[RMDB]
RNA sequence: GGGAACGACUCGAGUAGAGUCGAAAAGGGGUCGGAUACGAUGGCUCCUGUGGAGCUUGGAUUUAUAUGGCUGAAGCCUCCACGGCCAUAUUGUCAGCUCCACCUGAGCCGUUGUAUCCGACGGAGGCACCCAAAUCUGGCCCUUCGGGGCCAGAAAGAUCAGUGAUGGUUUCGACCAUCACUGAUCAAAAGAAACAACAACAACAAC
Reactivity to 2A3 in 0.01 (KOAc 150mM, MgCl2 10mM, bicine 150mM(pH8.5), 24C), signal-to-noise 1, nucleotides 027 to 156: g050g010g010g000u000c000g000g000a000u000a000c000g010a020u010g020g000c010u020c000c060u020g000u000g000g000a020g000c060u160u160g120g010a040u140u300u010a000u060a000u010g000g010c000u000g050a250a060g040c030c050u080c050c010a050c010g010g010c010c020a000u000a000u000u010g020u010c020a010g010c010u000c000c000a000c000c040u020g020a010g000c000c000g000u000u000g000u000a000u010c000c000g020a000c000g000g000a000g000g000c060a040c010c000c030a050a080a000u030c000u000g000g000c010c030c020u030u060c300g030g000g010g000c010c000a020g000a000a000a000
Notes:
An RNA of 207 nucleotides, treated with 2A3 and read out base by base. Values are in units of 0.01, from 0 to 300, in steps of 10.